Structure probing data (DMS and 2A3) for a 177-nucleotide construct. The 2A3 profile rests on 1,105 reads. Values cover nucleotides 27 to 126. For 2A3 the reverse transcriptase was SuperScript II with manganese. The RNA was probed in 150 mM KOAc, 10 mM MgCl2 and 150 mM bicine (pH 8.5) at 24 C.

RNA sequence: GGGAACGACUCGAGUAGAGUCGAAAAAGCGCUCGCCCUUGCCGGGCGCAAGCAGGUUAACCUUGAAUUCAAUGGUCAGCACCGCGGCGUCAGCGGGCAUGAGGGUCAGCGCCGCAUAGCCGCAGGAGCAGGGAAAAUGGUUCGCCAUUUUCCCUGCAAAAGAAACAACAACAACAAC
Reactivity to DMS in 0.01 (KOAc 150mM, MgCl2 10mM, bicine 150mM(pH8.5), 24C), signal-to-noise 1, nucleotides 027 to 126: a090g000c020g000c000u000c190g030c040c030c010u000u000g030c190c080g010g010g000c000g000c020a010a130g020c090a080g020g000u010u000a130a060c040c050u000u010g000a260a200u000u000c060a040a000u020g010g000u000c070a040g020c070a200c030c000g020c000g000g020c030g000u030c140a080g000c040g040g000g000c010a050u000g000a050g030g010g010u000c080a100g000c030g040c010c030g000c080a030u000a230g010c020c020g000c010a060g000g000a280
Reactivity to 2A3 in 0.01 (KOAc 150mM, MgCl2 10mM, bicine 150mM(pH8.5), 24C), signal-to-noise 1, nucleotides 027 to 126: a010g000c030g000c000u040c030g050c020c030c000u000u060g060c050c030g010g060g000c010g000c050a030a010g000c050a040g000g100u000u140a030a040c010c000u050u020g100a180a180u300u160c040a070a050u300g070g010u060c030a010g060c040a060c040c010g000c020g030g000c000g000u030c030a070g220c090g050g020g020c030a130u220g050a070g040g000g100u100c050a030g020c040g000c050c000g000c020a070u070a040g030c030c000g000c010a010g010g050a030